[RMDB]
RNA sequence: GGGAACGACUCGAGUAGAGUCGAAAAGGAGAUCGAAGAGGACCGACGUCAGCACGGUCGGGAUGUAGGUCCGCAUGCAUCCGAGUUGACGAAACUUUACGAUUUCCAAAGCGGACAAGAAGUCAAACGUACCUACCAUAUUCGUAUGGUAGGUACGAAAAGAAACAACAACAACAAC
Reactivity to 2A3 in 0.01 (KOAc 150mM, MgCl2 10mM, bicine 150mM(pH8.5), 24C), signal-to-noise 8, nucleotides 027 to 126: g010g000a010g010a010u000c010g030a110a060g040a100g170g050a030c040c030g060a060c040g080u110c070a040g030c120a030c070g050g070u090c060g030g020g000a000u000g000u010a000g010g000u010c000c000g000c000a000u000g000c000a000u000c000c000g010a000g000u010u030g040a070c100g040a080a050a030c000u030u030u050a040c020g000a000u010u000u000c000c000a060a070a010g000c000g000g000a000c020a020a070g170a100a020g070u110c050a080a010a020
Reactivity to DMS in 0.01 (KOAc 150mM, MgCl2 10mM, bicine 150mM(pH8.5), 24C), signal-to-noise 4, nucleotides 027 to 126: g000g000a010g010a000u000c010g000a130a080g020a070g010g020a120c140c110g010a180c040g000u030c080a080g000c090a300c050g000g010u000c110g010g010g020a000u000g030u000a090g010g000u000c000c000g000c010a050u000g010c020a000u000c000c000g010a030g000u000u000g010a070c110g010a100a030a070c020u000u000u010a130c000g000a030u000u000u000c000c000a070a080a100g000c000g000g000a000c020a150a090g010a110a110g000u000c110a040a080a210